Notes
Conditions: 150 mM KOAc, 10 mM MgCl2 and 150 mM bicine (pH 8.5), 24 C. An RNA of 177 nucleotides, treated with 2A3 and DMS and read out base by base. DMS (dimethyl sulfate) methylates the pairing face of unpaired adenines and cytosines. For DMS, 760 sequencing reads were counted.
RNA sequence: GGGAACGACUCGAGUAGAGUCGAAAAUGCAACCAAGCGCUCAGGAUGCGCACAAUAUCGCGCGCAAAGUAGAUCACUACGGCGGCCUCGGUGCCCAACUGGCUCACGGCGGUGAACGAGGCACCGGCCGGAAAAACUUCUUCGGAAGUUUUUCCGGAAAAGAAACAACAACAACAAC
Reactivity to 2A3 in 0.01 (KOAc 150mM, MgCl2 10mM, bicine 150mM(pH8.5), 24C), signal-to-noise 1, nucleotides 027 to 126: u100g000c010a030a090c000c010a080a010g040c020g000c010u040c110a090g010g150a260u150g040c020g220c000a000c080a020a110u220a060u260c050g030c030g000c020g070c000a060a140a000g060u050a030g030a200u190c070a080c190u050a000c050g000g030c030g010g040c030c000u030c040g000g000u070g000c000c000c000a030a030c030u100g130g000c000u030c030a050c070g140g030c120g100g010u010g000a040a000c030g010a080g080g000c020a000c000c000g000g000
Reactivity to DMS in 0.01 (KOAc 150mM, MgCl2 10mM, bicine 150mM(pH8.5), 24C), signal-to-noise 2, nucleotides 027 to 126: u010g020c080a110a220c040c060a110a120g000c030g000c040u000c090a070g020g010a300u000g010c010g010c000a070c060a070a250u010a110u010c150g020c010g000c010g000c010a040a070a210g020u000a010g000a140u010c090a040c060u000a020c070g040g000c110g000g000c030c070u030c000g020g020u000g050c000c000c010a070a150c090u010g000g020c040u010c110a000c130g040g010c160g000g010u000g020a070a090c060g030a130g020g000c000a020c000c020g020g020